[RMDB]
RNA sequence: GGGAACGACUCGAGUAGAGUCGAAAAGAUAUGGAGGCGAGGAUCUGUAGAGGAGCAACAGCAUAACGCUUGCGUCGGAAACGACGCAAGCGUUAUGACAUGCUCUGGACAGGGAGCCUCCUAAGUCGAACUAAGCGUAGUUCGCUACGCUUAGUUCAAAAGAAACAACAACAACAAC
Reactivity to DMS in 0.01 (KOAc 150mM, MgCl2 10mM, bicine 150mM(pH8.5), 24C), signal-to-noise 1, nucleotides 027 to 126: g000a120u000a300u020g010g010a010g010g010c000g010a050g000g000a020u010c000u000g010u020a130g020a300g020g000a010g010c000a030a140c300a200g010c000a010u000a000a020c000g010c010u000u000g000c000g050u000c000g010g000a090a120a260c020g000a000c000g040c000a030a000g010c000g020u000u000a000u000g000a030c070a170u000g000c000u010c000u000g010g000a050c000a010g000g000g000a030g020c000c000u000c000c000u000a000a030g010u000c130